The record gives the reactivity of an RNA of 177 nucleotides to DMS and 2A3.
The data come from the RNA Mapping Database (RMDB), libraries RFM100 and RFMREP.
The DMS profile rests on 798 reads.
Values cover nucleotides 27 to 126.
[RMDB]
RNA sequence: GGGAACGACUCGAGUAGAGUCGAAAAAGUGAGGCCACCUCGUACGCGAGGUGGCCUCACAUGAUUGAUGACAACUCGCGUCCAUACUCUUUACGGAGAUUGAUGACUUUGUUCUGCAAUCCUGAAACUUAAGUCUGUUUUUCGAAACAGACUUAAGAAAAGAAACAACAACAACAAC
Reactivity to DMS in 0.01 (KOAc 150mM, MgCl2 10mM, bicine 150mM(pH8.5), 24C), signal-to-noise 1, nucleotides 027 to 126: a140g040u020g010a030g060g010c000c000a000c030c000u000c020g160u010a080c280g010c000g050a000g050g050u000g000g020c000c000u000c000a000c000a000u000g000a290u000u000g000a010u010g000a160c290a070a040c000u010c010g030c140g030u010c010c060a070u000a120c040u010c040u000u010u010a210c220g000g010a120g030a090u000u000g000a190u000g010a070c030u000u010u010g010u000u000c010u000g020c030a020a030u000c020c000u000g000a100a080a120
Reactivity to 2A3 in 0.01 (KOAc 150mM, MgCl2 10mM, bicine 150mM(pH8.5), 24C), signal-to-noise 2, nucleotides 027 to 126: a000g010u000g010a000g030g020c000c000a010c000c000u010c000g020u050a030c220g000c000g070a000g070g010u000g000g010c050c010u000c000a000c000a000u010g010a000u000u010g010a020u060g020a010c000a000a000c010u010c050g010c010g010u000c010c000a030u120a150c000u010c000u070u100u070a070c070g000g000a150g010a140u000u020g020a030u030g010a020c030u070u150u190g040u140u020c010u040g070c000a010a030u030c000c010u030g120a300a030a030